The data come from the RNA Mapping Database (RMDB), library OK3TST.
Chemical mapping of a 207-nucleotide RNA with 2A3.
RNA sequence: GGGAACGACUCGAGUAGAGUCGAAAACUCUGCCCUUUUACACAGAUGUCUGUGUUGAAAGUGGUGGGGAUGACUGUUCAGACUCUUAGUUUACCCUGUCCUCACAUCCACUGAAGAAAAUGCCAGAGAAAACCAUUAUUCUGGGGUCUGUGUCAUCGCCAUAGGGAGGAUUCGUCCUCCCUAUGGCAAAAGAAACAACAACAACAAC
Reactivity to 2A3 in 0.01 (KOAc 150mM, MgCl2 10mM, bicine 150mM(pH8.5), 24C), signal-to-noise 1, nucleotides 027 to 156: c040u020c030u030g010c010c000c000u010u040u010u010a060c060a010c000a080g110a190u240g230u270c020u000g010u000g010u030u150g020a000a000a000g050u170g110g000u060g010g020g000g000a020u100g000a000c000u040g050u240u230c010a040g010a030c000u020c000u110u110a010g000u100u100u070a150c000c050c020u040g010u060c000c040u000c000a060c010a030u030c000c060a030c020u080g050a050a040g080a050a220a050a020u050g060c080c000a060g000a000g060a060a000a060a120c030c000a140u190u140a110u170u090c080u060g010g010g000g020u000c060u080g040u030g020u050c050a030u170c070